This 207-nucleotide RNA was probed chemically with 2A3.
2A3 adducts were read by reverse transcription with SuperScript II with manganese.
Source: RMDB library RSTRND, as collected in RNAgym.
[RMDB]
RNA sequence: GGGAACGACUCGAGUAGAGUCGAAAAGCUGCCUAAUUGCUGCAGCUAGCUCCUCCCGCCAUCGCCCGCGUGGCGUUCGAGGGGCUCAUAUGAAGCGGGCUACGCCCAAAUCCGCCGCCUGAGGAUGAGGGAAGAGACGAACCAGGCUAGCCGCCGGCUAGUUGGACAGCUUCGGCUGUCCAACUAGAAAAGAAACAACAACAACAAC
Reactivity to 2A3 in 0.01 (KOAc 150mM, MgCl2 10mM, bicine 150mM(pH8.5), 24C), signal-to-noise 2, nucleotides 027 to 156: g000c000u020g010c020c030u300a300a300u230u300g090c190u130g020c030a010g000c010u010a000g000c010u010c000c000u000c030c000c010g010c000c000a010u010c040g010c000c000c000g020c000g000u010g000g000c000g010u010u040c050g000a000g010g000g020g010c000u020c010a060u170a080u220g200a090a000g000c000g000g000g010c010u000a000c000g030c000c000c000a010a030a000u000c000c000g000c010c020g020c000c000u000g000a000g010g000a010u010g000a030g000g020g000a010a010g000a010g000a010c150g030a020a000c020c000a010g000g000c020u000a020g010c020c060g060c030c040g050g000